Source: RMDB library TTRDEL, as collected in RNAgym. The record gives the reactivity of an RNA of 177 nucleotides to DMS and 2A3. The RNA was probed in 150 mM KOAc, 10 mM MgCl2 and 150 mM bicine (pH 8.5) at 24 C. For 2A3, 1,932 sequencing reads were counted.
RNA sequence: GGGAACGACUCGAGUAGAGUCGAAAAGAUAUGGAAGCCGGGUGGAGAGCAACAGCUCGGAAACGAGACAUGCUCCCAUUGGCUUCCUAAGUCAAAACUCCGUCCAGUGUUCGCACUGGACGGAGAAGCUAUUUAAGAACUUCGGUUCUUAAAUAGCAAAAGAAACAACAACAACAAC
Reactivity to DMS in 0.01 (KOAc 150mM, MgCl2 10mM, bicine 150mM(pH8.5), 24C), signal-to-noise 1, nucleotides 027 to 126: g010a030u020a300u000g000g020a010a010g020c000c000g100g040g040u010g020g000a210g030a010g010c000a000a110c240a150g020c030u010c020g010g000a080a090a210c000g000a050g040a040c030a180u000g000c020u010c000c000c020a000u000u010g010g000c010u000u000c000c000u010a010a070g020u010c010a100a080a130a110c000u000c000c000g000u020c000c000a020g050u000g000u000u000c280g040c040a000c000u000g000g000a000c000g000g000a000g000a010a070
Reactivity to 2A3 in 0.01 (KOAc 150mM, MgCl2 10mM, bicine 150mM(pH8.5), 24C), signal-to-noise 2, nucleotides 027 to 126: g020a000u090a000u120g010g010a020a020g010c040c090g140g300g000u030g010g270a300g000a010g300c020a020a120c050a170g080c000u000c000g000g030a070a050a020c000g020a000g030a020c020a060u080g030c010u010c000c010c010a000u020u010g010g000c000u010u000c000c000u000a020a010g020u000c020a000a000a060a230c000u000c010c000g050u000c000c010a020g000u010g090u120u210c270g060c140a000c000u000g000g000a000c000g010g010a010g000a000a000

For 2A3 the reverse transcriptase was SuperScript II with manganese.